[RMDB]
This 177-nucleotide RNA was probed chemically with 2A3. For 2A3 the reverse transcriptase was SuperScript II with manganese.
RNA sequence: GGGAACGACUCGAGUAGAGUCGAAAAAACAUGAACAACAGACUCCCAGAUGUCUAAGCCCUGACCAGAGGACCAGUCUGGGAACCAGUAAAGGCUCAUGAGUUUACUGUGGCAAGUGCACCCAAGACUGUUUUACGCCGUUCGCGGCGUAAAACAGAAAAGAAACAACAACAACAAC
Reactivity to 2A3 in 0.01 (KOAc 150mM, MgCl2 10mM, bicine 150mM(pH8.5), 24C), signal-to-noise 1, nucleotides 027 to 126: a000a000c120a030u170g070a080a020c000a000a070c060a030g010a010c040u000c000c000c000a010g040a040u080g020u000c090u190a040a060g040c000c000c050u020g050a010c030c000a070g060a000g090g060a050c000c120a000g160u000c000u000g020g010g000a010a010c010c000a000g000u010a000a100a020g130g000c000u000c000a040u080g260a020g090u000u000u040a000c020u000g010u000g140g070c050a050a140g100u050g000c020a090c000c020c000a000a000g090a040
Reactivities are rounded to 0.1 and cut off at 0 and 3. It was measured as part of the RMDB library RFM100.